[RMDB]
RNA sequence: GGGAACGACUCGAGUAGAGUCGAAAAGAACGAGUACACGUGUACGUGAGUACGAGUGUGUUCACGAACGUUCUCUCGUACGUGUGAGUGUUCGAGAGAACGUUCUCGAACGAUCGAGAGAACACACGUUCGUGAGUACACACGUUCGUUCGAGUUCAUCACUAAUCAAUUUCGAUUGAUUAGUGAUAAAAGAAACAACAACAACAAC
Reactivity to DMS in 0.01 (KOAc 150mM, MgCl2 10mM, bicine 150mM(pH8.5), 24C), signal-to-noise 6, nucleotides 027 to 156: g000a010a020c020g010a090g030u010a090c070a100c110g020u000g030u000a030c020g010u000g010a300g030u010a030c000g010a110g010u000g030u000g010u010u000c010a060c070g000a030a040c010g010u000u000c000u000c000u000c000g030u000a120c030g020u000g010u010g010a190g020u000g020u000u000c010g010a170g000a170g010a040a030c040g010u000u010c000u000c010g020a070a070c110g010a280u000c050g000a130g010a140g000a060a060c020a070c090a050c030g000u000u000c000g000u000g000a090g000u000a040c020a030c010a080c030g000u010u000c010g000u000u000c010g000a130g010u000u000c070
Reactivity to 2A3 in 0.01 (KOAc 150mM, MgCl2 10mM, bicine 150mM(pH8.5), 24C), signal-to-noise 9, nucleotides 027 to 156: g010a010a000c010g010a020g070u200a030c070a020c120g070u110g050u150a030c070g050u100g130a080g080u110a010c020g010a070g020u000g000u000g000u000u000c020a010c050g020a020a000c000g000u010u000c000u000c000u000c000g020u100a140c030g040u120g050u110g110a080g050u120g000u020u010c000g000a000g000a000g000a060a010c020g010u030u010c000u000c000g040a050a040c060g030a120u090c020g000a010g000a000g010a050a010c030a010c010a010c130g020u020u010c000g000u010g000a010g020u040a000c000a000c010a010c030g010u020u020c000g000u000u000c010g000a020g020u030u060c030

This 207-nucleotide RNA was probed chemically with DMS and 2A3. For DMS, 24,708 sequencing reads were counted. 2A3 adducts were read by reverse transcription with SuperScript II with manganese. Values are in units of 0.01, from 0 to 300, in steps of 10. The RNA was probed in 150 mM KOAc, 10 mM MgCl2 and 150 mM bicine (pH 8.5) at 24 C. The data come from the RNA Mapping Database (RMDB), library OK3TST. For 2A3, 35,677 sequencing reads were counted.